The record gives the reactivity of an RNA of 207 nucleotides to 2A3 and DMS. The reactions ran in a buffer of 150 mM KOAc, 10 mM MgCl2 and 150 mM bicine (pH 8.5), at 24 C. For 2A3 the reverse transcriptase was SuperScript II with manganese. Values cover nucleotides 27 to 156.
[RMDB]
RNA sequence: GGGAACGACUCGAGUAGAGUCGAAAAGGCCUCGUUAAAAGCCGCAAAGUUAUAGUUGCAAACGACGAUAACUACGCUCUAGCCGCUUAAUGCCGCUAGCCAUCUACCACACGUUUCGCACAUGGGCAGUGGAUUUGAUGGUCAUCUCACAUCGUGCCUUCGGGUUAUAGUUCGCUAUAACCCGAAGAAAAGAAACAACAACAACAAC
Reactivity to 2A3 in 0.01 (KOAc 150mM, MgCl2 10mM, bicine 150mM(pH8.5), 24C), signal-to-noise 2, nucleotides 027 to 156: g060g010c020c010u050c080g040u060u100a100a120a030a000g060c060c030g010c080a150a120a000g010u020u030a040u020a080g000u030u040g120c100a090a190a090c100g030a010c030g020a030u030a050a020c010u060a040c070g020c010u020c000u020a020g010c040c060g010c090u110u260a090a060u300g000c010c010g000c000u020a000g020c010c000a010u000c010u040a020c010c000a010c010a010c100g010u020u030u010c020g010c000a010c000a020u030g020g010g000c020a020g010u010g010g070a110u280u050u100g000a000u010g010g040u050c030a130u040c050u030c010a030c000a030u060c090g000u000g000c000
Reactivity to DMS in 0.01 (KOAc 150mM, MgCl2 10mM, bicine 150mM(pH8.5), 24C), signal-to-noise 1, nucleotides 027 to 156: g020g040c020c010u010c050g020u000u020a070a060a090a010g020c010c120g060c030a070a180a200g010u000u000a090u000a100g000u000u010g010c090a100a180a270c040g010a040c020g000a020u000a030a020c010u000a100c190g010c040u010c030u000a050g000c020c070g000c030u010u000a090a130u020g020c040c030g010c000u000a070g020c010c000a030u000c030u010a150c030c010a090c020a070c100g050u010u000u010c160g000c090a060c070a100u010g020g010g050c000a210g010u000g030g000a140u000u000u000g010a090u010g010g020u000c040a150u010c040u020c030a120c060a070u000c040g020u000g020c080